[RMDB]
RNA sequence: GGGAACGACUCGAGUAGAGUCGAAAACUCCUAUUUAAAACCUGCAUUAGUGCUCUUAAACUAGUGUUAUUGUGGGCCGGUACUAUUACUUUGAACAAAUAAGAGUGCUUAAAGCAGGCUUCAAAUGCCUCGUAGUGACAUUCGUGUCACUACGAGGAAAAGAAACAACAACAACAAC
Reactivity to 2A3 in 0.01 (KOAc 150mM, MgCl2 10mM, bicine 150mM(pH8.5), 24C), signal-to-noise 3, nucleotides 027 to 126: c020u020c000c010u080a070u040u170u080a060a120a000a040c000c000u010g000c000a030u070u090a010g010u000g000c030u000c000u010u060a120a080a070c080u010a080g070u040g010u130u070a070u000u220g020u100g000g020g000c020c000g060g000u010a080c050u050a060u160u000a070c070u190u110u210g060a190a040c110a070a010a020u110a000a000g000a000g000u020g010c000u040u060a020a030a000g000c000a010g010g000c000u060u020c000a000a020a100u060g050